[RMDB]
RNA sequence: GGGAACGACUCGAGUAGAGUCGAAAAGUUCCGCUGUGGGUUCGCCUACAAGAACGUACGGUGUUGAGGCCCUGUCCGCCGCUGCGCUGCCACCUACUCUUCGCGCCGCUAGUCGAGCGGACUCCGGACUUCUUGAAGAGUUCGCUCUUCAAGAAGUAAAAGAAACAACAACAACAAC
Reactivity to DMS in 0.01 (KOAc 150mM, MgCl2 10mM, bicine 150mM(pH8.5), 24C), signal-to-noise 5, nucleotides 027 to 126: g000u000u000c010c030g010c060u000g010u000g000g000g010u000u000c130g010c060c030u020a050c070a070a100g010a070a030c030g000u000a070c070g010g000u000g010u000u000g010a090g000g000c020c020c040u000g010u000c020c040g000c010c030g010c030u000g000c020g000c060u010g020c040c100a110c130c030u010a080c120u000c070u000u000c180g000c080g030c220c040g000c030u010a040g020u010c050g010a110g020c000g000g010a020c020u000c030c060g000g000
Reactivity to 2A3 in 0.01 (KOAc 150mM, MgCl2 10mM, bicine 150mM(pH8.5), 24C), signal-to-noise 3, nucleotides 027 to 126: g010u010u000c020c000g000c030u030g000u030g010g050g010u010u080c140g040c060c000u060a060c040a040a090g010a040a010c060g120u120a030c060g020g040u060g050u110u110g070a060g030g060c020c000c030u040g020u000c010c010g000c010c000g030c030u020g000c010g000c030u050g010c020c000a080c010c030u110a150c030u050c080u240u170c050g030c040g000c070c000g000c040u060a020g070u240c040g010a020g000c010g020g000a000c010u000c000c010g060g030
An RNA of 177 nucleotides, treated with DMS and 2A3 and read out base by base. DMS adducts were read by reverse transcription with MarathonRT. The reactions ran in a buffer of 150 mM KOAc, 10 mM MgCl2 and 150 mM bicine (pH 8.5), at 24 C. Reactivities are given for positions 27 through 126.